[RMDB]
RNA sequence: GGGAACGACUCGAGUAGAGUCGAAAACGUCAUCGAAGAACGGCUGGCUACCGUUGCCGUCGGAGCUGAGGGUGACGCGUGCCAGCGGAAUACCCGCCUGAACGGCGCGGGCAAUACCUUCGGCAGAGUCGGAGGCUAUAUUCGUAUAGCCUCCGACAAAAGAAACAACAACAACAAC
Reactivity to 2A3 in 0.01 (KOAc 150mM, MgCl2 10mM, bicine 150mM(pH8.5), 24C), signal-to-noise 1, nucleotides 027 to 126: c020g080u040c030a080u050c020g070a080a030g000a080a000c000g120g010c040u020g000g000c040u090a040c000c000g030u020u030g000c070c040g260u000c020g030g150a100g120c230u220g040a030g000g090g040u040g000a020c090g000c060g000u030g010c000c000a010g010c010g000g000a010a020u100a060c000c020c000g000c000c040u120g170a200a070c150g050g070c070g010c050g050g030g000c040a080a000u120a220c030c000u040u000c000g000g000c020a040g000a020
Reactivity to DMS in 0.01 (KOAc 150mM, MgCl2 10mM, bicine 150mM(pH8.5), 24C), signal-to-noise 1, nucleotides 027 to 126: c090g000u000c030a140u000c010g000a040a050g000a060a070c060g000g040c020u000g000g010c000u000a040c060c000g000u000u000g010c010c030g000u000c000g000g000a180g000c170u010g050a030g030g000g030u000g000a040c070g010c140g030u000g000c030c000a000g000c010g000g000a060a160u000a250c010c000c000g030c000c030u000g000a120a150c200g010g030c210g050c040g010g000g000c070a080a070u020a090c080c000u000u000c010g010g040c190a160g010a150
Chemical mapping of a 177-nucleotide RNA with 2A3 and DMS. It was measured as part of the RMDB library OK2TST. The RNA was probed in 150 mM KOAc, 10 mM MgCl2 and 150 mM bicine (pH 8.5) at 24 C. DMS adducts were read by reverse transcription with MarathonRT.